RNA sequence: GGGAACGACUCGAGUAGAGUCGAAAAUCAAGAAAGGUUCUUAGCGAGGAUGGUAGCCAACUUACGUUCCGCUAGAGUAGAACUGGAAAUGAUAAUUUAAUAAUGUACACUUUCGAUUGUCUAAGUAGAAAAACCAUGGUUUCGACCAUGGUUUUUCAAAAGAAACAACAACAACAAC
Reactivity to DMS in 0.01 (KOAc 150mM, MgCl2 10mM, bicine 150mM(pH8.5), 24C), signal-to-noise 2, nucleotides 027 to 126: u020c010a060a110g040a150a220a060g000g000u000u000c000u000u010a010g020c040g010a190g030g000a030u000g030g060u000a000g000c170c190a110a110c060u010u010a030c020g080u000u000c030c040g040c020u000a010g020a230g080u110a010g010a000a000c000u000g010g000a190a090a060u000g000a030u010a020a050u050u030u050a150a040u000a150a060u060g020u020a030c090a060c030u000u000u000c060g000a190u000u000g010u000c010u000a030a040g030u030a180
Reactivity to 2A3 in 0.01 (KOAc 150mM, MgCl2 10mM, bicine 150mM(pH8.5), 24C), signal-to-noise 2, nucleotides 027 to 126: u090c000a070a010g300a150a030a050g040g000u070u000c050u050u020a000g000c000g010a280g100g040a010u040g130g000u010a050g020c110c120a020a140c030u160u100a070c000g000u000u000c000c000g020c000u000a000g000a140g010u200a010g110a030a000c000u040g030g080a060a080a000u020g000a020u140a080a150u180u150u150a150a220u210a060a030u070g120u260a090c160a090c130u000u160u300c120g160a130u000u000g000u060c000u080a000a130g040u080a160